Record summary
Chemical mapping of a 177-nucleotide RNA with 2A3 and DMS. For 2A3 the reverse transcriptase was SuperScript II with manganese. For DMS, 5,308 sequencing reads were counted. Conditions: 150 mM KOAc, 10 mM MgCl2 and 150 mM bicine (pH 8.5), 24 C. It was measured as part of the RMDB library OK2TST.

[RMDB]
RNA sequence: GGGAACGACUCGAGUAGAGUCGAAAAACUCGGAACCAUCGACUACGUCCCCGAUGUCUAUUUCGGUGAUGUAGUCGUACUGCAGCCUACCGAAGGUGUAACUGGUUUUUACCCGAGCCUAGGCGGAUACCACAUAUGACUUCGGUCAUAUGUGGUAAAAAGAAACAACAACAACAAC
Reactivity to 2A3 in 0.01 (KOAc 150mM, MgCl2 10mM, bicine 150mM(pH8.5), 24C), signal-to-noise 3, nucleotides 027 to 126: a000c010u010c020g000g040a020a040c030c010a050u050c000g000a000c010u020a000c000g010u020c030c040c010c000g010a000u040g160u200c140u300a280u090u100u000c000g010g010u000g010a010u010g000u000a000g000u000c000g000u010a000c000u020g020c020a080g180c010c010u040a070c030c060g070a100a020g010g000u040g020u030a070a050c070u060g010g080u040u020u020u140u180a060c010c000c010g010a010g020c020c000u060a060g090g000c010g030g010a040
Reactivity to DMS in 0.01 (KOAc 150mM, MgCl2 10mM, bicine 150mM(pH8.5), 24C), signal-to-noise 4, nucleotides 027 to 126: a220c030u010c060g000g020a110a070c080c050a090u010c010g000a020c000u000a010c010g010u000c000c040c010c000g000a020u000g000u000c240u010a150u010u000u000c000g020g000u000g010a030u000g010u000a010g010u000c000g010u010a020c170u010g010c110a110g000c010c010u000a100c120c050g010a160a050g020g010u010g000u000a040a080c130u010g000g010u000u000u000u010u010a110c150c010c010g010a140g010c070c050u000a050g000g020c090g010g010a190